[RMDB]
RNA sequence: GGGAACGACUCGAGUAGAGUCGAAAAUUAAUACUGCUACAUUUUUAAGACCCUUAGUUAUUUAGCUUUACCGCACAGGAUGGGGUGCAGCGUUCCUGCAAUAUCCAGGGCACCUAGGUGCAGCCUUCAUGCCUCAUGCCGUUCGCGGCAUGAGGAACAUAAUCUCCGUCUUCGGACGGAGAUUAUGAAAAGAAACAACAACAACAAC
Reactivity to 2A3 in 0.01 (KOAc 150mM, MgCl2 10mM, bicine 150mM(pH8.5), 24C), signal-to-noise 1, nucleotides 027 to 156: u060u030a020a020u020a200c050u070g010c050u020a020c060a100u110u120u050u070u280a100a030g060a130c000c020c000u050u080a030g010u170u100a140u070u100u100a060g020c020u090u090u070a100c010c010g010c000a020c050a070g070g070a050u050g000g020g070g000u020g000c000a020g060c020g110u140u060c000c000u030g000c030a070a070u030a060u300c000c050a000g000g050g000c030a010c020c010u020a030g020g040u000g020c010a040g020c000c010u060u080c090a040u180g000c000c000u040c020a000u000g000c000c000g060u100u010c100g030c030g220g000c020a000u000g000a000g000g000a000a000